[RMDB]
The record gives the reactivity of an RNA of 177 nucleotides to DMS and 2A3. The reactions ran in a buffer of 150 mM KOAc, 10 mM MgCl2 and 150 mM bicine (pH 8.5), at 24 C.

RNA sequence: GGGAACGACUCGAGUAGAGUCGAAAAGGAUGACGCUAGUGCACUAGCAGAGGUCCUCGUGGACGACCGCGAGCCUAGUAUGACGGAGCGCUGAUAGAGCAUGUGCAUCAAUGCUGUACACAGGCGGAGAUGUAUCGUCGUUCGCGAUGAUGCAUCUAAAAGAAACAACAACAACAAC
Reactivity to DMS in 0.01 (KOAc 150mM, MgCl2 10mM, bicine 150mM(pH8.5), 24C), signal-to-noise 9, nucleotides 027 to 126: g010g010a040u010g010a190c100g010c010u000a040g010u010g010c090a050c020u010a020g000c020a070g000a180g010g000u010c040c010u010c050g040u010g010g010a150c190g000a120c090c040g000c020g010a070g000c030c010u010a080g010u030a060u020g010a090c090g000g000a090g010c030g010c010u010g000a170u020a060g010a060g000c020a030u010g010u000g010c070a040u020c070a100a090u010g000c010u000g010u010a060c110a070c080a190g000g010c020g000g010
Reactivity to 2A3 in 0.01 (KOAc 150mM, MgCl2 10mM, bicine 150mM(pH8.5), 24C), signal-to-noise 9, nucleotides 027 to 126: g070g010a070u100g030a020c080g000c020u020a010g010u050g100c050a050c130u050a020g000c030a010g030a020g060g030u040c020c000u010c020g020u050g010g030a090c090g070a130c020c010g000c010g010a010g010c000c000u050a070g060u090a100u150g050a040c050g030g050a070g030c030g000c040u040g030a130u070a090g090a010g020c020a030u070g030u040g040c010a010u070c030a050a070u070g010c010u030g040u080a020c080a010c010a060g070g000c010g010g040
For 2A3, 104,722 sequencing reads were counted. For DMS the reverse transcriptase was MarathonRT. For DMS, 145,439 sequencing reads were counted. 2A3 adducts were read by reverse transcription with SuperScript II with manganese. In probing experiments dimethyl sulfate is read out at A N1 and C N3, which are open when not base-paired.